[RMDB]
RNA sequence: GGGAACGACUCGAGUAGAGUCGAAAAUGGCAACGACGGGGCUAGUCUGAUCCCAGCCGACUAUGAAAUCCUGAACCGGGUAGCCGACAAGCUCAAGGCAUGUCCGGACGCUCGGGUGACGAUCAACUGGACCUCAUCUAUUCGUAGAUGAGGUCCAAAAAGAAACAACAACAACAAC
Reactivity to DMS in 0.01 (KOAc 150mM, MgCl2 10mM, bicine 150mM(pH8.5), 24C), signal-to-noise 1, nucleotides 027 to 126: u020g030g030c070a050a070c130g000a050c030g000g010g000g000c080u000a030g000u010c140u000g000a010u010c010c030c020a080g000c000c100g000a090c050u010a080u000g010a180a070a040u000c010c030u000g010a130a090c010c000g000g000g010u010a080g010c000c000g000a040c050a040a070g010c020u010c140a210a100g020g010c020a040u000g000u020c030c090g030g040a040c010g020c030u000c000g000g000g030u020g000a120c120g000a070u010c150a080a130c150